[RMDB]
RNA sequence: GGGAACGACUCGAGUAGAGUCGAAAAAGCAGUUAUAUCGAAAAACGAUAUAACUGCAAAUAGGAUGGGGUGUGAUAGGUGGCACGGAGAAUUUUGGAUUCUCAGGGAUGGGUUCGAUUCUCAUAGUCCUAGAAGCAGUGUGUCAAAACGCACUGCAGUACUGUACAUCAUUCGUGAUGUACAGUACAAAAGAAACAACAACAACAAC
Reactivity to 2A3 in 0.01 (KOAc 150mM, MgCl2 10mM, bicine 150mM(pH8.5), 24C), signal-to-noise 3, nucleotides 027 to 156: a000g000c010a000g000u000u000a010u010a000u010c020g090a190a060a070a030a060c010g000a000u000a000u000a010a000c000u000g000c000a020a000a000u060a010g030g010a030u080g010g010g000g000u020g020u040g060a080u060a100g040g050u050g030g000c060a020c040g050g000a010g010a040a030u070u160u160u260g090g050a030u030u040c030u020c090a040g040g020g010a060u070g000g010g020u060u080c020g040a050u110u010c030u030c030a050u070a060g030u020c010c030u020a060g060a160a000g000c000a000g000u000g000u010g020u100c100a040a050a020a070c020g000c000a000c000u000g000c000a000
Reactivity to DMS in 0.01 (KOAc 150mM, MgCl2 10mM, bicine 150mM(pH8.5), 24C), signal-to-noise 2, nucleotides 027 to 156: a130g010c010a000g020u010u000a020u020a010u000c000g030a170a190a150a220a300c020g010a030u000a000u000a010a000c010u000g010c000a000a000a050u010a060g000g000a080u000g000g000g050g020u010g040u000g000a120u000a070g040g010u000g030g020c090a060c080g010g050a070g020a050a050u000u000u000u000g030g010a120u000u000c000u000c000a070g000g000g000a070u000g000g000g000u000u010c070g000a280u000u010c030u000c020a090u010a080g010u000c030c050u030a130g020a170a130g020c010a030g000u000g000u010g010u010c040a070a020a040a300c190g000c020a000c000u000g020c000a070